This 177-nucleotide RNA was probed chemically with 2A3 and DMS. It was measured as part of the RMDB libraries RFM100 and RFMREP. Values cover nucleotides 27 to 126. The RNA was probed in 150 mM KOAc, 10 mM MgCl2 and 150 mM bicine (pH 8.5) at 24 C.
[RMDB]
RNA sequence: GGGAACGACUCGAGUAGAGUCGAAAAUGCCGCCAUGAGUGUCGCCUGUUCGCGUCGAAGGAUCGAUCUGUUUUCGAUCAUAUAUCAGUUUCGGUAUAGCAAUCAUCAAAGAUCGCAUUUGACAGUUCAUACUUCAUGUGUUCGCACAUGAAGUAUGAAAAGAAACAACAACAACAAC
Reactivity to 2A3 in 0.01 (KOAc 150mM, MgCl2 10mM, bicine 150mM(pH8.5), 24C), signal-to-noise 6, nucleotides 027 to 126: u090g020c000c010g000c010c000a070u120g030a020g090u100g030u040c010g020c000c000u050g030u130u080c060g020c030g020u040c020g040a060a030g080g010a040u050c010g010a020u020c050u100g200u070u120u060u090c040g010a020u010c030a010u020a000u010a000u050c040a050g060u040u100u160c070g010g010u030a020u030a040g030c060a040a040u030c010a000u040c040a040a110a020g010a030u040c030g000c070a050u030u020u140g050a030c020a020g020u010u000
Reactivity to DMS in 0.01 (KOAc 150mM, MgCl2 10mM, bicine 150mM(pH8.5), 24C), signal-to-noise 3, nucleotides 027 to 126: u000g010c040c010g020c030c050a060u010g000a070g030u000g020u010c050g000c070c020u000g010u000u000c050g000c100g020u020c090g000a070a080g020g020a050u040c000g000a020u000c090u010g010u020u010u010u000c060g000a020u000c100a160u000a010u010a060u000c030a140g020u010u010u010c120g000g000u000a020u000a020g010c150a050a030u000c030a030u000c150a070a090a070g000a020u000c030g020c080a160u000u000u000g000a060c080a110g020u010u000